Chemical mapping of a 177-nucleotide RNA with 2A3 and DMS. It was measured as part of the RMDB library OK2TRN. The RNA was probed in 150 mM KOAc, 10 mM MgCl2 and 150 mM bicine (pH 8.5) at 24 C.
RNA sequence: GGGAACGACUCGAGUAGAGUCGAAAAUCGCCGCAGUUAAACAAGGCGGACAACAACAAUUCACUGCCUAUGUUCGUGCUACAGACGCUAAAGAUCAUAAAGUCGUUUGGAGCGUUGAAGGUGGUUCACACUUUCUCUUUUUCGAAAGAGAAAGUGUAAAAGAAACAACAACAACAAC
Reactivity to 2A3 in 0.01 (KOAc 150mM, MgCl2 10mM, bicine 150mM(pH8.5), 24C), signal-to-noise 9, nucleotides 027 to 126: u070c010g000c010c010g000c050a100g040u150u280a150a090a060c060a100a040g070g000c000g020g020a010c010a040a010c000a010a000c010a010a090u220u130c060a050c030u020g000c000c000u120a150u200g180u090u090c040g020u050g000c000u010a010c000a010g000a010c010g000c010u060a120a120a070g120a130u110c030a070u200a120a160a030g080u160c020g000u010u010u010g020g000a010g000c030g010u040u170g030a030a010g000g000u010g010g010u130u120c040
Reactivity to DMS in 0.01 (KOAc 150mM, MgCl2 10mM, bicine 150mM(pH8.5), 24C), signal-to-noise 9, nucleotides 027 to 126: u010c070g020c010c000g010c130a150g010u010u010a100a110a150c170a110a150g010g010c000g000g000a070c050a020a030c050a050a060c110a080a100u010u010c160a100c020u000g010c000c000u000a090u010g020u010u000c080g010u010g000c000u000a030c010a020g000a010c010g010c020u000a070a120a150g010a110u010c190a080u010a050a090a050g000u010c010g010u000u000u000g000g000a020g010c010g000u000u000g020a070a050g010g020u000g000g010u000u010c130